[RMDB]
RNA sequence: GGGAACGACUCGAGUAGAGUCGAAAAGAUAUGGACAGGAGCAACAGCCAUGACUUCGGAAACGAAGUAUGGACAUGCUCCGUCCUAAGUCAAAACAACAGUACUUGGUUCGCCAAGUACUGUUGAACUACAACAUUACGUUCGCGUAAUGUUGUAGAAAAGAAACAACAACAACAAC
Reactivity to DMS in 0.01 (KOAc 150mM, MgCl2 10mM, bicine 150mM(pH8.5), 24C), signal-to-noise 8, nucleotides 027 to 126: g010a030u000a260u010g000g000a010c010a110g030g000a020g010c000a030a070c300a190g010c010c000a010u000g010a020c000u000u000c000g010g000a050a060a130c010g010a010a010g000u000a010u000g000g010a060c100a160u000g000c000u000c000c000g010u000c000c000u000a010a060g000u010c030a080a070a140a210c010a000a010c000a010g010u000a000c000u000u000g000g010u000u020c270g010c000c000a000a010g000u000a000c000u000g000u000u000g000a040a160
Reactivity to 2A3 in 0.01 (KOAc 150mM, MgCl2 10mM, bicine 150mM(pH8.5), 24C), signal-to-noise 7, nucleotides 027 to 126: g010a020u050a020u090g040g010a040c240a300g050g010a010g010c010a020a180c070a160g080c020c000a040u130g270a120c010u010u000c000g010g020a040a040a030c000g000a010a000g000u010a010u010g000g020a050c010a060u030g000c000u000c000c000g000u000c000c000u000a060a010g020u000c030a000a020a100a190c000a000a000c000a000g010u010a000c000u010u020g040g020u070u210c290g040c120c000a000a000g000u000a000c000u000g000u000u000g000a000a000